[RMDB]
RNA sequence: GGGAACGACUCGAGUAGAGUCGAAAAGGAUGCACUUAAGGAGUUUAUGCUUAAGGACAUGAAAUCAAAGCAGUACACCAAUGUGGGAAUCGAAAUUGGCAGACCAAAAUUGCAGCCUAUGGACAUACUUACGGGAGACUUUCGAGUCUCCCGUAAGAAAAGAAACAACAACAACAAC
Reactivity to DMS in 0.01 (KOAc 150mM, MgCl2 10mM, bicine 150mM(pH8.5), 24C), signal-to-noise 1, nucleotides 027 to 126: g050g040a100u000g040c170a010c030u000u020a050a160g000g000a100g000u010u030u000a040u040g050c000u010u010a130a120g010g010a130c060a060u000g000a070a050a070u020c090a030a080a080g020c080a030g010u000a060c180a050c110c110a030a080u000g020u000g000g000g020a040a040u000c130g000a000a130a080u020u000g010g040c040a130g000a040c030c070a090a050a040a080u000u000g010c040a050g010c030c000u000a110u000g030g050a040c100a080u000a090